[RMDB]
RNA sequence: GGGAACGACUCGAGUAGAGUCGAAAAACACCGAUCUUCGGAUCGGUGUAAAUAAAUUCAGCGGUUUAAAUUUCGAGCGGAUAACCGCUGAUGCGCUCGAAAAAACAGUUAGGUUCGCCUAACUGAAGUGAUAAAAUUACUUCGGUAAUUUUAUCACAAAAGAAACAACAACAACAAC
Reactivity to 2A3 in 0.01 (KOAc 150mM, MgCl2 10mM, bicine 150mM(pH8.5), 24C), signal-to-noise 2, nucleotides 027 to 126: a000c000a010c010c000g000a000u020c020u020u130c190g050g010a000u000c000g000g020u010g000u010a010a000a000u010a010a000a010u060u000c000a000g000c010g010g110u030u130u220a140a280a110u170u270u090c050g040a020g010c040g080g020a030u090a060a040c000c000g000c000u000g000a000u010g000c050g020c000u040c000g000a090a090a000a000a040a040c000a000g000u000u000a000g000g020u000u040c190g010c040c000u000a000a000c000u010g010a050a000
Reactivity to DMS in 0.01 (KOAc 150mM, MgCl2 10mM, bicine 150mM(pH8.5), 24C), signal-to-noise 2, nucleotides 027 to 126: a100c000a000c000c000g010a000u000c000u000u010c180g030g000a000u010c000g000g020u000g000u010a010a030a060u000a040a060a070u010u000c010a020g020c010g000g010u000u010u000a100a110a150u000u000u000c030g000a060g030c070g010g010a080u010a030a050c020c010g000c000u000g000a000u010g010c100g030c010u000c000g000a000a020a060a110a070a180c010a000g000u000u010a020g000g010u000u000c220g000c000c000u000a010a010c000u000g010a030a060